[RMDB]
RNA sequence: GGGAACGACUCGAGUAGAGUCGAAAAGAAGCACCUCAACCCAAGAACUGCUGUUUCUUGUAAUAGCGGUUUAAACAGAGGUGCUGACAGCAAGUUGAUCUCGUCGCCUUUGGGGGGCUGUGGCCGUCGAUAGGGAUCUCUUCGGAGAUCCCUAUCGAAAAGAAACAACAACAACAAC
Reactivity to DMS in 0.01 (KOAc 150mM, MgCl2 10mM, bicine 150mM(pH8.5), 24C), signal-to-noise 1, nucleotides 027 to 126: g030a100a040g050c000a010c010c010u000c020a080a130c020c010c010a080a190g020a000a000c000u030g050c030u000g000u000u000u000c300u030u040g020u000a010a030u000a060g010c000g020g000u000u010u010a060a140a070c140a270g000a030g000g030u000g010c000u000g000a100c120a050g000c070a020a080g000u020u030g010a010u000c020u000c050g010u000c050g000c030c060u020u000u000g010g000g020g000g000g010c060u000g020u010g000g000c090c020g010u020
Reactivity to 2A3 in 0.01 (KOAc 150mM, MgCl2 10mM, bicine 150mM(pH8.5), 24C), signal-to-noise 2, nucleotides 027 to 126: g130a000a000g000c020a000c000c000u000c000a030a060c000c000c050a040a010g060a020a010c010u010g020c010u010g090u030u010u110c180u240u290g130u290a000a000u000a040g000c010g020g010u010u020u020a040a110a010c040a010g000a000g000g000u000g020c000u000g060a020c040a010g070c050a040a160g040u080u060g100a110u020c000u000c020g090u060c030g060c040c000u090u050u040g050g000g010g000g000g060c040u040g020u050g050g000c030c000g020u020